Chemical mapping of a 177-nucleotide RNA with 2A3 and DMS. The reactions ran in a buffer of 150 mM KOAc, 10 mM MgCl2 and 150 mM bicine (pH 8.5), at 24 C. For DMS, 25,332 sequencing reads were counted.
RNA sequence: GGGAACGACUCGAGUAGAGUCGAAAAGUCACAGCCCUUCCUGGAGGCAGCGCGGCAAGUCCGGCACUAUCUCGGCCGGGAGGACGUGUUUUUUCUGCACGUGUCGCUGGUGCCCUACCUGGCGCCGCGACCUGCCUUUAUUCGUAAAGGCAGGUCGAAAAGAAACAACAACAACAAC
Reactivity to 2A3 in 0.01 (KOAc 150mM, MgCl2 10mM, bicine 150mM(pH8.5), 24C), signal-to-noise 7, nucleotides 027 to 126: g070u050c030a020c050a120g040c020c000c000u030u050c020c010u050g050g010a030g030g030c020a040g060c040g010c000g040g000c040a070a040g060u040c010c000g020g020c020a030c090u210a200u100c090u030c070g080g000c010c000g020g010g010a030g040g020a010c010g010u020g050u000u050u020u020u080u080c070u070g000c010a010c020g040u050g020u040c010g010c070u090g030g050u030g000c010c010c010u050a130c010c020u030g020g000c020g000c030c030g050
Reactivity to DMS in 0.01 (KOAc 150mM, MgCl2 10mM, bicine 150mM(pH8.5), 24C), signal-to-noise 9, nucleotides 027 to 126: g010u000c080a080c130a120g010c020c010c020u000u000c010c020u000g010g010a110g010g010c040a040g010c070g020c030g000g000c040a100a120g010u010c010c010g020g010c020a070c100u000a100u010c100u000c110g010g010c040c030g010g010g000a080g010g000a050c020g010u000g000u000u000u010u010u010u010c150u010g000c010a020c030g010u000g010u000c030g020c030u000g020g010u000g010c020c010c070u000a090c090c050u000g010g000c050g020c040c140g010
Record summary:
For 2A3, 23,319 sequencing reads were counted. DMS (dimethyl sulfate) methylates the pairing face of unpaired adenines and cytosines. It was measured as part of the RMDB library OK2TST.